[RMDB]
RNA sequence: GGGAACGACUCGAGUAGAGUCGAAAACUGCUAGCACAAUUCAUGCUGUAGAGCUGAACUGGGCAUCCUUAGAAUAUUUGAGCAAGACCUGAAGUGAGUUUUAUUACCCAUGAAGUUUUUUACCAAAUAACAAGGCAGUAUUCGUACUGCCUUGUUAAAAAGAAACAACAACAACAAC
Reactivity to DMS in 0.01 (KOAc 150mM, MgCl2 10mM, bicine 150mM(pH8.5), 24C), signal-to-noise 2, nucleotides 027 to 126: c080u000g020c090u010a110g000c030a070c040a040a100u000u010c030a040u010g020c000u000g010u000a100g000a070g010c010u010g010a020a050c060u010g000g000g020c040a110u000c060c030u000u030a090g010a060a040u000a080u010u010u010g000a090g020c110a050a080g000a050c140c020u000g000a080a090g030u000g010a070g010u000u010u000u000a070u010u010a100c010c030c010a100u000g000a150a120g020u000u000u010u000u000u000a110c100c050a030a050a130

Conditions: 150 mM KOAc, 10 mM MgCl2 and 150 mM bicine (pH 8.5), 24 C. Structure probing data (DMS) for a 177-nucleotide construct. Values are in units of 0.01, from 0 to 300, in steps of 10. The DMS profile rests on 1,873 reads. Source: RMDB library OK2TST, as collected in RNAgym.